[RMDB]
RNA sequence: GGGAACGACUCGAGUAGAGUCGAAAACAUCACAUCGAACUUGAUACAUACAGUACAGCACCUUGAAAACAAAUUAUCUGCUAGUUCAGUAUUUUCUACUUAUAAUCACUCCCUCCCAGGGCAUGUACCUGUGUACUUUCUUCGGAAAGUACACAGGAAAAGAAACAACAACAACAAC
Reactivity to DMS in 0.01 (KOAc 150mM, MgCl2 10mM, bicine 150mM(pH8.5), 24C), signal-to-noise 3, nucleotides 027 to 126: c070a090u020c060a080c070a030u000c110g010a110a100c060u000u020g000a080u020a010c110a070u010a130c080a140g000u010a070c040a120g030c030a020c040c010u010u000g010a100a030a100a110c150a010a100a030u030u000a060u010c090u000g000c030u000a060g020u010u010c090a110g000u000a020u000u010u020u000c040u000a040c040u000u010a070u020a010a040u010c040a040c050u000c020c010c030u020c010c010c010a110g050g000g000c060a020u020g010u030a120
Reactivity to 2A3 in 0.01 (KOAc 150mM, MgCl2 10mM, bicine 150mM(pH8.5), 24C), signal-to-noise 7, nucleotides 027 to 126: c020a050u110c040a010c010a100u070c060g030a050a080c020u050u110g030a020u050a110c040a020u120a030c040a060g080u050a040c010a060g000c010a040c010c020u040u110g040a040a030a060a010c060a040a120a060u150u050a050u080c020u050g030c040u030a020g050u060u070c040a020g040u030a080u040u050u030u020c020u010a040c020u070u090a040u050a160a040u070c020a010c040u020c000c000c000u010c010c000c000a010g010g030g000c030a020u070g000u040a030